Description
Structure probing data (DMS and 2A3) for a 177-nucleotide construct. 2A3 adducts were read by reverse transcription with SuperScript II with manganese. For DMS the reverse transcriptase was MarathonRT. Reactivities are rounded to 0.1 and cut off at 0 and 3. For DMS, 12,245 sequencing reads were counted. The data come from the RNA Mapping Database (RMDB), library M2PK50.

[RMDB]
RNA sequence: GGGAACGACUCGAGUAGAGUCGAAAAGGGCGUCAUUUCGAUGACGCCCAUACGUCUACUCCGAUUGGCGAGGACGACGCCGACGGGCGCGUUUGCCAAACGCACCGUCCAGAUUCGUCUGGACGAAGGAAAGUAUGAGAUUCGUCUCAUACUUUCCAAAAGAAACAACAACAACAAC
Reactivity to DMS in 0.01 (KOAc 150mM, MgCl2 10mM, bicine 150mM(pH8.5), 24C), signal-to-noise 7, nucleotides 027 to 126: g010g010g010c000g020u000c000a010u000u000u010c190g010a020u000g010a010c000g010c000c000c000a000u000a020c240g000u000c010u000a030c010u000c020c020g010a140u010u000g000g010c010g010a130g000g010a030c020g010a100c010g040c000c010g010a140c300g000g010g010c020g020c010g000u000u000u000g000c030c020a010a020a050c020g000c120a110c200c010g000u000c000c010a000g000a030u000u010c160g000u000c000u000g000g000a010c010g000a050a080
Reactivity to 2A3 in 0.01 (KOAc 150mM, MgCl2 10mM, bicine 150mM(pH8.5), 24C), signal-to-noise 9, nucleotides 027 to 126: g010g000g000c010g010u010c010a010u030u060u160c220g090a020u010g000a000c000g010c000c000c000a000u010a000c010g030u000c010u010a020c010u000c010c010g060a070u010u030g000g000c030g050a100g110g050a060c020g090a170c000g010c010c010g220a300c170g050g010g010c010g000c010g010u000u020u110g030c000c000a010a010a020c020g000c020a050c040c010g000u000c000c000a000g000a020u020u070c120g050u000c080u000g000g000a010c010g020a050a020